Chemical mapping of a 177-nucleotide RNA with DMS and 2A3. The DMS profile rests on 1,886 reads. The 2A3 profile rests on 2,964 reads.
RNA sequence: GGGAACGACUCGAGUAGAGUCGAAAACAGGUAUAGCUAUAUCUGUUAAACCAGAGAGUACAGCUGAUCAAGAGACUUAUGGUGGAGCUUCAGUGUGUCUCUAUUGCCGUGCGCAUAUAGAACAUCCGUAGUUGAGUAAGUUCGCUUACUCAACUACAAAAGAAACAACAACAACAAC
Reactivity to DMS in 0.01 (KOAc 150mM, MgCl2 10mM, bicine 150mM(pH8.5), 24C), signal-to-noise 3, nucleotides 027 to 126: c020a030g020g020u010a020u000a160g030c140u020a170u000a000u010c000u010g010u000u000a070a140a240c040c010a090g020a110g000a050g010u010a090c090a180g010c020u000g010a070u000c040a090a060g010a250g010a050c070u000u010a070u000g000g020u010g000g000a100g010c040u000u010c070a060g030u020g020u000g000u000c080u020c020u000a050u000u020g000c030c020g000u000g010c130g040c030a020u000a040u010a030g000a040a070c060a040u010c170c180
Reactivity to 2A3 in 0.01 (KOAc 150mM, MgCl2 10mM, bicine 150mM(pH8.5), 24C), signal-to-noise 3, nucleotides 027 to 126: c000a000g030g010u020a010u040a050g170c150u090a030u000a010u050c010u000g010u000u070a050a010a020c010c010a010g020a000g000a000g100u070a040c020a010g010c030u030g030a070u090c060a120a040g030a010g050a120c030u050u110a040u210g060g030u050g040g040a030g030c000u080u050c020a060g020u050g010u010g020u100c010u010c010u090a060u020u060g000c020c040g170u110g040c150g000c030a000u060a000u010a160g080a050a020c020a040u030c040c060